[RMDB]
RNA sequence: GGGAACGACUCGAGUAGAGUCGAAAAAAAACCACUUGCAGAAACUAAUUGCAUCUCAUGUGGACAGUGUACGUUAGGUUGUCCAAAGUUUACUAUCUUUGAAGCUGACGCAAUUAAUCCAGUGAAGAAUGCUUGGUUAAUUCGUUAACCAAGCAUUAAAAGAAACAACAACAACAAC
Reactivity to 2A3 in 0.01 (KOAc 150mM, MgCl2 10mM, bicine 150mM(pH8.5), 24C), signal-to-noise 3, nucleotides 027 to 126: a000a010a040a070c020c010a040c050u030u050g030c070a000g050a190a150a070c030u080a100a000u110u040g000c010a070u010c020u010c050a050u120g030u070g170g000a030c010a070g060u050g070u160a000c070g010u030u100a050g160g010u080u040g090u040c040c000a010a020a010g030u040u090u040a090c070u070a040u110c040u050u090u020g040a090a020g000c030u040g020a010c020g000c010a000a030u050u080a080a030u070c030c010a040g030u020g060a040a020g120
Reactivity to DMS in 0.01 (KOAc 150mM, MgCl2 10mM, bicine 150mM(pH8.5), 24C), signal-to-noise 5, nucleotides 027 to 126: a080a060a080a090c030c000a060c080u000u000g030c090a040g010a080a090a080c110u010a060a060u010u000g010c060a050u000c040u000c030a040u010g010u000g010g000a060c090a050g010u000g000u010a030c100g020u000u000a030g020g010u000u000g010u000c080c010a030a030a030g010u000u010u020a110c210u000a060u010c010u000u000u010g010a100a060g000c020u010g000a040c040g000c040a050a060u000u000a080a120u000c030c040a090g010u000g010a090a110g000

Source information
The record gives the reactivity of an RNA of 177 nucleotides to 2A3 and DMS. Values cover nucleotides 27 to 126. For DMS the reverse transcriptase was MarathonRT. The RNA was probed in 150 mM KOAc, 10 mM MgCl2 and 150 mM bicine (pH 8.5) at 24 C.